[RMDB]
Structure probing data (2A3 and DMS) for a 177-nucleotide construct. High DMS reactivity at an A or C suggests that its Watson-Crick edge is free. The reactions ran in a buffer of 150 mM KOAc, 10 mM MgCl2 and 150 mM bicine (pH 8.5), at 24 C. Reactivities are given for positions 27 through 126.

RNA sequence: GGGAACGACUCGAGUAGAGUCGAAAAUCUACAUAGUUCGCUAUGUAGAAAAACCCGCACGCGCGCGCACGCGCUCACUCUCGCACACGCACGCGCACGCAAAAACGUUGCGGUUCGCCGCAACGAAUCAUGCACCUAAGUUCGCUUAGGUGCAUGAAAAAGAAACAACAACAACAAC
Reactivity to 2A3 in 0.01 (KOAc 150mM, MgCl2 10mM, bicine 150mM(pH8.5), 24C), signal-to-noise 2, nucleotides 027 to 126: u020c000u000a000c000a010u010a000g020u020u040c120g030c110u000a000u010g000u010a000g010a030a000a000a000a020c000c020c000g040c010a040c090g010c000g000c000g010c000g010c010a020c080g010c020g030c030u060c050a050c050u190c000u050c050g030c020a040c000a010c130g000c010a000c050g000c000g030c010a010c040g040c040a080a000a070a060a000c000g010u010u020g000c010g000g090u020u050c260g040c050c000g010c000a000a000c000g010a010a030
Reactivity to DMS in 0.01 (KOAc 150mM, MgCl2 10mM, bicine 150mM(pH8.5), 24C), signal-to-noise 2, nucleotides 027 to 126: u000c010u000a010c000a010u000a000g020u000u050c250g030c000u010a000u000g000u000a010g020a010a070a110a150a160c000c000c020g000c100a150c130g000c020g030c010g000c020g000c050a210c080g020c020g000c110u000c090a110c100u000c110u010c070g020c030a070c130a080c040g000c010a120c040g000c000g000c010a040c000g020c020a040a030a140a050a210c020g000u000u000g000c000g000g000u000u000c170g040c010c010g040c000a000a000c000g000a030a070